An RNA of 177 nucleotides, treated with 2A3 and read out base by base.
Values cover nucleotides 27 to 126.

RNA sequence: GGGAACGACUCGAGUAGAGUCGAAAAUGGGGGGCUUUGCCGUCCCCCUCGUAGUCGGUGGGCUGUGCGCCGUAGUCCUGGGGGCGGCGUGUCUGCUUGAGCUCCUGCGUCGUACGUGCCGCGGGUGAGUGGUCAUAACCUUCGGGUUAUGACCACUAAAAGAAACAACAACAACAAC
Reactivity to 2A3 in 0.01 (KOAc 150mM, MgCl2 10mM, bicine 150mM(pH8.5), 24C), signal-to-noise 1, nucleotides 027 to 126: u110g010g010g000g000g010g000c000u060u130u120g040c040c060g050u040c010c000c000c050c000u000c030g090u030a050g090u030c020g010g050u150g060g010g010c030u050g060u050g070c000g000c010c000g010u040a030g060u150c090c100u080g000g000g000g000g070c000g000g010c010g030u110g030u000c040u060g010c020u020u100g040a020g020c010u030c000c000u010g000c000g000u000c030g030u070a080c050g070u130g070c000c000g060c000g050g000g000u020g030